[RMDB]
The record gives the reactivity of an RNA of 177 nucleotides to 2A3. Source: RMDB library OK1LIB, as collected in RNAgym. The reactions ran in a buffer of 150 mM KOAc, 10 mM MgCl2 and 150 mM bicine (pH 8.5), at 24 C.
RNA sequence: GGGAACGACUCGAGUAGAGUCGAAAAAAGCAAAAAUUCUUCGAACGCAUGUGAAAUCGGUAGUAUCCCAUUUCACACCUUUCAUUUCACCGGAUACUACCUCAGUGGGUAAAGGGUACUGGAAUCGGGUCAAAAUCGUGUUCGCACGAUUUUGACCAAAAGAAACAACAACAACAAC
Reactivity to 2A3 in 0.01 (KOAc 150mM, MgCl2 10mM, bicine 150mM(pH8.5), 24C), signal-to-noise 2, nucleotides 027 to 126: a000a000g170c210a130a070a070a070a070u090u080c050u090u140c110g120a100a070c070g000c070a030u030g000u000g100a010a010a010u230c180g010g010u000a000g030u080a090u000c000c020c050a070u020u030u090c000a040c000a090c040c030u110u150u200c000a250u000u020u100c050a110c120c000g080g000a020u050a080c000u080a070c000c000u040c000a000g020u010g040g000g000u000a010a010a010g000g090g000u070a020c000u000g000g180a070a190u300c070g000